[RMDB]
Source: RMDB libraries RFM100 and RFMREP, as collected in RNAgym.
This 177-nucleotide RNA was probed chemically with 2A3 and DMS.

RNA sequence: GGGAACGACUCGAGUAGAGUCGAAAAAUCUUGUGGAUCUUGCCGUGGACAUGUUUCUGGCAUGUGUUUCUCAAGCCUGCAACCGACGACUGAACAGACGUGUGAACAGUUUGAGUGUGGUAGCGCUACAAUUACGAGAGUUCGCUCUCGUAAUUGUAAAAGAAACAACAACAACAAC
Reactivity to 2A3 in 0.01 (KOAc 150mM, MgCl2 10mM, bicine 150mM(pH8.5), 24C), signal-to-noise 7, nucleotides 027 to 126: a010u050c040u040u100g040u060g030g040a020u040c010u030u040g020c020c030g120u110g050g000a060c030a190u170g060u020u070u020c040u050g030g010c030a020u030g060u010g000u010u100u000c040u010c020a020a010g010c000c000u000g000c010a020a010c010c020g050a020c030g010a010c010u010g030a080a020c000a040g300a180c140g190u220g050u030g070a050a020c010a030g000u020u030u050g090a090g000u240g010u030g050g020u020a010g000c020g000c100u020
Reactivity to DMS in 0.01 (KOAc 150mM, MgCl2 10mM, bicine 150mM(pH8.5), 24C), signal-to-noise 3, nucleotides 027 to 126: a060u010c040u000u000g010u000g020g000a060u000c020u010u010g020c060c010g020u020g010g000a070c070a070u020g000u010u010u010c070u030g000g000c000a050u010g000u000g000u000u000u000c030u000c030a060a050g000c040c010u000g030c000a040a050c010c000g000a300c290g010a020c030u010g000a060a150c020a070g000a110c210g020u000g000u000g000a050a180c020a020g010u000u000u000g010a230g020u040g010u000g020g040u000a020g010c120g000c040u000